[RMDB]
RNA sequence: GGGAACGACUCGAGUAGAGUCGAAAAGCAGGCGCAUGCAGGGAUGCCGGCAGGCCACAAUGGUCCGGUAGAGGAUACUCGCAGCGCUGAGCUGGCGCGGCUGCUGAGCGCUGAUUGGCCGACGGCCACCUACAACUAUCUUCGGAUAGUUGUAGGUAAAAGAAACAACAACAACAAC
Reactivity to 2A3 in 0.01 (KOAc 150mM, MgCl2 10mM, bicine 150mM(pH8.5), 24C), signal-to-noise 8, nucleotides 027 to 126: g030c040a030g060g000c030g010c060a040u090g000c010a020g060g010g040a090u110g030c010c010g030g020c090a030g030g000c000c010a060c060a050a170u200g030g000u000c010c030g050g050u160a100g050a120g100g030a040u110a300c030u050c100g040c040a020g000c000g000c030u020g020a020g000c040u070g030g000c120g000c020g210g070c010u030g000c020u060g080a020g010c000g000c010u010g020a120u030u170g010g000c010c020g070a090c080g020g000c010c000
Reactivity to DMS in 0.01 (KOAc 150mM, MgCl2 10mM, bicine 150mM(pH8.5), 24C), signal-to-noise 9, nucleotides 027 to 126: g020c060a140g010g010c040g020c040a070u000g010c040a050g010g000g010a110u010g020c010c020g000g010c140a250g020g010c010c020a080c220a090a100u010g010g010u000c010c000g000g010u010a090g010a150g000g000a080u000a070c040u000c190g010c040a030g010c050g010c020u000g000a050g010c010u000g010g010c030g010c080g000g010c030u000g000c010u000g000a050g000c010g000c010u000g000a090u010u000g010g010c000c010g010a140c090g010g010c010c120

An RNA of 177 nucleotides, treated with 2A3 and DMS and read out base by base. For 2A3, 29,677 sequencing reads were counted.